[RMDB]
RNA sequence: GGGAACGACUCGAGUAGAGUCGAAAAAUCCUGCCCUUCGGGGCAGGAUGCAGCUUCCCUCUUGAGAGCGCGACUUAAGAGGAAUCCCAACGCGCAGAAGCACUAUUUCUCAGUUCGCUGAGAAAAACCUACUCUAGGUUUUCGAACCUAGAGUAGGAAAAGAAACAACAACAACAAC
Reactivity to DMS in 0.01 (KOAc 150mM, MgCl2 10mM, bicine 150mM(pH8.5), 24C), signal-to-noise 4, nucleotides 027 to 126: a030u000c000c000u000g000c000c000c010u000u000c180g040g020g010g020c000a010g010g000a010u000g010c130a170g000c090u000u000c010c000c000u000c010u000u000g000a020g000a110g030c060g010c090g000a160c020u000u000a010a010g000a020g000g010a110a110u000c010c000c010a080a110c180g020c120g010c070a090g010a030a040g020c030a140c150u010a140u000u000u000c000u000c000a000g010u000u020c170g020c030u000g000a020g000a000a020a020a120a200
Reactivity to 2A3 in 0.01 (KOAc 150mM, MgCl2 10mM, bicine 150mM(pH8.5), 24C), signal-to-noise 3, nucleotides 027 to 126: a000u000c000c000u000g010c000c010c000u020u070c250g060g000g010g000c010a000g000g000a000u000g000c030a020g000c010u020u000c010c000c000u000c000u010u010g020a010g010a020g060c070g010c040g140a140c020u010u010a010a000g000a010g020g070a040a100u050c010c010c020a060a070c110g070c010g000c070a020g040a040a000g040c030a000c080u130a210u070u050u010c000u000c000a030g020u060u080c130g030c100u000g010a000g000a030a000a000a000a010